[RMDB]
RNA sequence: GGGAACGACUCGAGUAGAGUCGAAAAUCCCUGUUCUUUGUACACACCGCCCGUCGUUAUCUAAGAUGGUGCUAUGUUCGAAGAGGGUUUUCCUUCUGAGGACGUAGGAUUAGAUUGGAUACAAGUCCAUCUGAAAACGCUUCGGCGUUUUCAGAUGAAAAGAAACAACAACAACAAC
Reactivity to 2A3 in 0.01 (KOAc 150mM, MgCl2 10mM, bicine 150mM(pH8.5), 24C), signal-to-noise 2, nucleotides 027 to 126: u010c020c000c000u020g010u010u040c020u010u020u090g130u050a000c050a000c020a010c020c040g090c050c020c010g040u060c010g100u130u020a010u000c000u000a000a000g010a030u020g000g020u020g060c000u000a000u020g010u000u020c000g010a010a000g000a000g010g010g000u070u100u120u260c000c000u000u040c020u000g010a050g010g010a000c010g010u000a000g000g000a000u010u010a010g030a030u000u010g000g000a010u010a050c020a050a150g040u000c020
Reactivity to DMS in 0.01 (KOAc 150mM, MgCl2 10mM, bicine 150mM(pH8.5), 24C), signal-to-noise 1, nucleotides 027 to 126: u000c000c020c000u030g010u000u000c000u000u000u010g000u010a090c140a050c050a010c040c050g020c020c000c040g020u030c060g060u040u010a030u010c010u000a050a020g010a040u000g000g010u000g000c000u000a000u000g000u000u000c000g020a260a030g020a020g000g010g000u060u030u000u030c000c010u000u000c030u000g010a270g000g010a000c010g030u050a000g000g000a020u020u000a030g000a190u000u000g000g010a020u000a030c110a100a140g040u010c090